[RMDB]
RNA sequence: GGGAACGACUCGAGUAGAGUCGAAAAGAUAUGGAACCUGGUACGGAGGCUUUGAUCUACAUUCGGAAACGAAUGUAGGGAGCCUUUACCUGGGUUCCUAAGUCAAAGGUAUAGUUCGCUAUACCAAGAUUAGAACACUCUUCGGAGUGUUCUAAUCAAAAGAAACAACAACAACAAC
Reactivity to 2A3 in 0.01 (KOAc 150mM, MgCl2 10mM, bicine 150mM(pH8.5), 24C), signal-to-noise 1, nucleotides 027 to 126: g000a000u000a020u060g030g000a010a000c020c010u050g050g020u200a100c300g300g260a060g000g030c000u300u300u030g000a010u000c010u000a000c010a000u000u000c010g020g000a000a000a010c000g010a020a010u000g010u000a000g000g010g000a000g010c000c000u000u000u000a010c000c000u020g030g010g020u000u000c000c000u010a010a000g000u020c010a040a100a180g000g010u000a020u010a010g030u030u070c300g000c180u020a000u010a000c000c010a030a040
Reactivity to DMS in 0.01 (KOAc 150mM, MgCl2 10mM, bicine 150mM(pH8.5), 24C), signal-to-noise 2, nucleotides 027 to 126: g010a000u010a090u010g010g000a010a000c000c000u000g060g020u020a110c300g030g030a030g030g020c000u000u030u020g000a030u040c000u020a000c020a010u000u010c000g000g000a010a010a030c000g010a000a010u000g000u000a000g000g000g020a010g040c010c000u000u000u000a020c060c000u000g000g000g020u000u000c000c000u010a000a030g000u000c010a130a150a130g000g010u000a000u020a020g010u000u010c260g020c000u010a000u000a020c000c000a140a150